Source: RMDB library OK2TRN, as collected in RNAgym. The record gives the reactivity of an RNA of 177 nucleotides to DMS. DMS adducts were read by reverse transcription with MarathonRT. DMS (dimethyl sulfate) methylates the pairing face of unpaired adenines and cytosines. Conditions: 150 mM KOAc, 10 mM MgCl2 and 150 mM bicine (pH 8.5), 24 C.
[RMDB]
RNA sequence: GGGAACGACUCGAGUAGAGUCGAAAACAGCAGCCGCGGUAAUACGUAGGGGGCAAGCGUUGUCCGGAAUUAUUGGGCGUAAAGCGCGCGCAGGCGGUUAAUUAAGUUGGGUGUUUAAGCCCGGGGCGGAUUGUAUGGCAUUCGUGCCAUACAAUCCAAAAGAAACAACAACAACAAC
Reactivity to DMS in 0.01 (KOAc 150mM, MgCl2 10mM, bicine 150mM(pH8.5), 24C), signal-to-noise 2, nucleotides 027 to 126: c080a090g040c030a100g030c000c000g000c000g030g010u000a070a060u000a090c050g000u000a140g010g010g030g030g040c100a040a120g020c130g020u000u000g020u000c010c050g000g010a110a080u030u000a110u000u000g000g020g030c030g000u000a050a070a150g020c020g010c080g000c240g060c020a120g000g010c030g030g010u000u000a030a090u020u010a020a130g020u000u000g000g000g020u010g010u000u000u000a080a280g000c030c020c010g030g020g000g020c300